[RMDB]
RNA sequence: GGGAACGACUCGAGUAGAGUCGAAAAGGUAAUGCUUAUAUUCAAGCUCUGAUGCUUCAUGGAGUCAAUCAGAACAACUUUGCAUCACUGAAUAAAGCGAACCGCAUCAAGACCGCGACCCGAUUAGAGGUCAUUUUGAAGCAGGCAUUUAUCAGAGCCACAGAAGUCUAUUCGUAGACUUCUGUGGAAAAGAAACAACAACAACAAC
Reactivity to DMS in 0.01 (KOAc 150mM, MgCl2 10mM, bicine 150mM(pH8.5), 24C), signal-to-noise 1, nucleotides 027 to 156: g000g030u000a010a020u010g050c020u000u000a160u000a080u010u000c100a040a300g020c020u010c010u010g030a040u000g030c010u040u000c110a070u000g000g030a040g070u020c020a210a190u000c040a050g020a040a090c040a050a170c070u000u010u010g040c070a060u030c050a100c070u000g000a160a080u000a020a060a060g000c000g010a090a050c020c010g030c010a070u000c010a010a140g020a060c070c040g020c040g010a090c010c000c010g000a280u000u000a110g010a130g000g020u000c010a240u010u000u000u000g010a060a040g030c050a060g010g000c050a060u000u000u000a100u010c070a070g000a210g010
Reactivity to 2A3 in 0.01 (KOAc 150mM, MgCl2 10mM, bicine 150mM(pH8.5), 24C), signal-to-noise 4, nucleotides 027 to 156: g050g000u080a130a080u210g000c010u030u090a100u010a030u300u060c070a130a060g010c050u010c070u170g010a000u020g020c020u090u070c060a130u220g070g010a030g020u060c060a040a230u120c030a090g080a090a030c010a020a040c030u110u140u140g000c000a010u020c020a020c040u040g010a010a030u040a020a030a000g010c010g020a030a030c000c000g020c020a030u090c020a040a050g030a070c020c040g030c020g050a020c010c010c010g070a130u080u210a070g050a060g050g000u020c030a030u070u110u040u110g070a070a030g010c040a050g060g000c030a050u020u100u070a090u130c070a020g050a020g130